An RNA of 177 nucleotides, treated with DMS and read out base by base.

[RMDB]
RNA sequence: GGGAACGACUCGAGUAGAGUCGAAAACUCAGCCCGGUGGAGCACUGAGGUGCUGCCAUGGGCAUGGCCAGCCUCCAACAUUGCCAGUGGCCAGGGAGUAGGCGGGAGUGGCCAGGAAGUCAGGUGGUGGAUGACUCGGAUUCGUCCGAGUCAUCCAAAAAGAAACAACAACAACAAC
Reactivity to DMS in 0.01 (KOAc 150mM, MgCl2 10mM, bicine 150mM(pH8.5), 24C), signal-to-noise 1, nucleotides 027 to 126: c020u000c040a170g010c000c000c000g030g100u000g040g000a080g050c030a000c000u000g000a200g050g030u000g010c020u000g020c050c000a050u000g000g000g000c000a030u000g000g000c010c050a080g000c090c020u000c000c030a120a070c130a110u010u020g010c070c000a140g000u000g000g000c050c070a100g000g000g000a130g000u000a090g000g040c080g040g000g000a100g060u020g010g000c030c000a090g000g010a060a070g010u000c100a010g040g010u000g030g030
For DMS the reverse transcriptase was MarathonRT.